[RMDB]
RNA sequence: GGGAACGACUCGAGUAGAGUCGAAAAUUUUUUAAACAGGCAGUCAACCCAGUUAGAUUCAGAUGGCAUAUCCUGGCUCACUUUCUCAGCUCUGUGGUUCCGGUAUCCACCCUGCUGUUGACCACUGCCAUUAUCAACGAUUCGUCGUUGAUAAUGGAAAAGAAACAACAACAACAAC
Reactivity to DMS in 0.01 (KOAc 150mM, MgCl2 10mM, bicine 150mM(pH8.5), 24C), signal-to-noise 3, nucleotides 027 to 126: u000u010u010u030u000u020a070a070a150c080a030g010g000c060a070g000u020c070a070a120c070c070c030a080g000u000u000a050g000a090u000u000c110a030g020a080u010g000g000c060a060u010a040u000c030c050u010g000g000c030u010c050a090c070u000u000u000c040u000c050a100g020c070u000c070u010g010u010g020g010u010u000c110c060g000g010u000a080u000c060c030a080c050c010c060u000g000c020u000g010u000u000g000a090c100c040a090c080u010g000
Reactivity to 2A3 in 0.01 (KOAc 150mM, MgCl2 10mM, bicine 150mM(pH8.5), 24C), signal-to-noise 2, nucleotides 027 to 126: u020u020u020u000u010u070a040a090a040c050a030g060g050c060a020g080u010c020a070a020c090c040c010a040g030u100u210a060g020a060u030u170c050a000g090a170u060g050g030c010a040u030a050u140c000c020u020g110g000c020u040c030a050c020u100u090u000c040u010c010a010g020c020u030c030u040g040u030g060g000u120u000c050c000g040g000u010a040u070c010c020a030c070c000c010u000g040c010u040g030u090u070g050a080c010c020a080c080u020g010
Chemical mapping of a 177-nucleotide RNA with DMS and 2A3. Source: RMDB library OK2TRN, as collected in RNAgym. The 2A3 profile rests on 1,391 reads. The reactions ran in a buffer of 150 mM KOAc, 10 mM MgCl2 and 150 mM bicine (pH 8.5), at 24 C. For DMS the reverse transcriptase was MarathonRT.